About this RNA:
The record gives the reactivity of an RNA of 177 nucleotides to 2A3 and DMS. Source: RMDB library TTRDES, as collected in RNAgym.
RNA sequence: GGGAACGACUCGAGUAGAGUCGAAAAGAUAUGGAUAGGUGUUUCCGAUAAGCGUUUGUUCGGAAACGAACAUGCGCUUUUGACGGAAGCCCUAUCCUAAGUCAAAACACGUGCUUCGGCACGUGAACAACAUCAUGCAGUUCGCUGCAUGAUGUUGAAAAGAAACAACAACAACAAC
Reactivity to 2A3 in 0.01 (KOAc 150mM, MgCl2 10mM, bicine 150mM(pH8.5), 24C), signal-to-noise 4, nucleotides 027 to 126: g020a010u040a030u120g000g010a000u010a000g000g020u200g010u250u010u010c020c070g020a090u080a300a010g000c010g020u010u020u000g010u020u000c010g010g000a020a070a020c000g000a000a000c000a000u020g000c010g000c030u000u020u020u070g180a090c050g000g000a000a000g000c010c000c010u000a000u000c000c010u000a010a000g010u010c020a030a050a070a110c020a000c010g010u000g010c010u070u110c270g170g000c000a000c000g000u010g000a010a030
Reactivity to DMS in 0.01 (KOAc 150mM, MgCl2 10mM, bicine 150mM(pH8.5), 24C), signal-to-noise 4, nucleotides 027 to 126: g000a040u010a300u010g000g000a000u000a010g010g030u020g020u000u000u000c000c010g020a150u010a010a010g000c000g010u000u000u000g010u000u000c000g010g000a080a040a140c000g020a010a010c000a010u000g000c000g020c000u000u000u000u000g010a230c130g000g000a020a010g010c000c000c000u000a000u000c000c000u000a000a080g000u010c010a110a100a160a220c020a010c000g030u000g000c010u000u010c230g030g010c000a000c000g000u000g010a090a170

Source information: The reactions ran in a buffer of 150 mM KOAc, 10 mM MgCl2 and 150 mM bicine (pH 8.5), at 24 C. For DMS, 6,607 sequencing reads were counted.